[RMDB]
RNA sequence: GGGAACGACUCGAGUAGAGUCGAAAACCUCCAGAGGACCCCUUCAGCGAACGGAGGGCUCUCUCACACGGCAGGAGUAAGACCAUAGCGUAGGAAGAGAUGCUAGGAGUUAGGGGAGACCGGAGCGCAUAACCAUAACGUUCGCGUUAUGGUUAUGAAAAGAAACAACAACAACAAC
Reactivity to 2A3 in 0.01 (KOAc 150mM, MgCl2 10mM, bicine 150mM(pH8.5), 24C), signal-to-noise 3, nucleotides 027 to 126: c010c010u030c030c010a080g020a080g110g030a060c030c020c000c000u040u050c050a070g040c030g150a050a080c060g010g030a030g060g020g010c000u000c010u000c000u000c010a060c000a030c080g140g000c030a030g000g060a030g050u130a090a050g070a080c000c020a070u080a040g070c050g040u030a060g010g070a100a050g020a010g010a050u130g010c020u010a040g000g090a080g050u070u070a020g000g000g030g020a010g010a010c000c030g020g010a040g040c100g020
Reactivity to DMS in 0.01 (KOAc 150mM, MgCl2 10mM, bicine 150mM(pH8.5), 24C), signal-to-noise 4, nucleotides 027 to 126: c060c010u000c090c080a110g020a110g000g010a070c230c010c010c020u010u000c050a100g000c080g020a040a060c070g020g000a070g010g010g000c100u000c020u000c010u010c050a180c100a090c090g010g000c070a080g000g000a100g010u010a070a110g000a090c050c030a100u010a070g010c030g010u020a070g010g000a070a070g010a090g000a040u000g010c030u000a070g010g000a090g010u000u000a060g000g000g010g020a090g000a060c030c050g000g000a080g010c150g020